Structure probing data (2A3 and DMS) for a 177-nucleotide construct.
Source: RMDB library RFMREP, as collected in RNAgym.
High DMS reactivity at an A or C suggests that its Watson-Crick edge is free.
The reactions ran in a buffer of 150 mM KOAc, 10 mM MgCl2 and 150 mM bicine (pH 8.5), at 24 C.
For 2A3, 13,634 sequencing reads were counted.
[RMDB]
RNA sequence: GGGAACGACUCGAGUAGAGUCGAAAAGAUACGCUAUGCACUGCUAAGGAUAUCUAAAUUGUAUUACAAUCCACGUGGUAGAGUCAUAGUUAGGUUCGCUAUGGUGCAACUCUUUAAGGCAAUAACGCUAGAAUAUAUUGUUCGCAAUAUAUUCUAGAAAAGAAACAACAACAACAAC
Reactivity to 2A3 in 0.01 (KOAc 150mM, MgCl2 10mM, bicine 150mM(pH8.5), 24C), signal-to-noise 9, nucleotides 027 to 126: g030a040u110a050c050g000c020u020a020u040g010c020a020c080u030g010c010u050a080a100g030g010a040u030a050u120c050u090a070a130a150u150u110g090u090a150u090u130a070c060a030a030u000c030c020a050c130g070u100g020g010u020a030g010a020g100u090c010a010u030a010g010u040u050a050g020g050u040u050c020g000c050u050a060u150g100g000u050g020c020a030a060c010u020c010u090u130u080a070a030g060g010c030a080a110u090a140a010c040g010
Reactivity to DMS in 0.01 (KOAc 150mM, MgCl2 10mM, bicine 150mM(pH8.5), 24C), signal-to-noise 9, nucleotides 027 to 126: g000a090u000a080c140g010c020u000a050u000g010c050a300c040u000g000c040u010a140a140g000g010a050u000a050u010c170u000a040a070a110u000u000g010u000a210u000u000a060c130a070a050u000c030c020a090c230g010u000g010g020u000a020g010a090g010u000c010a010u000a030g010u000u000a060g010g010u000u010c060g010c020u000a040u010g010g010u000g010c070a050a070c060u000c040u000u010u000a080a090g010g010c060a060a060u010a050a080c220g010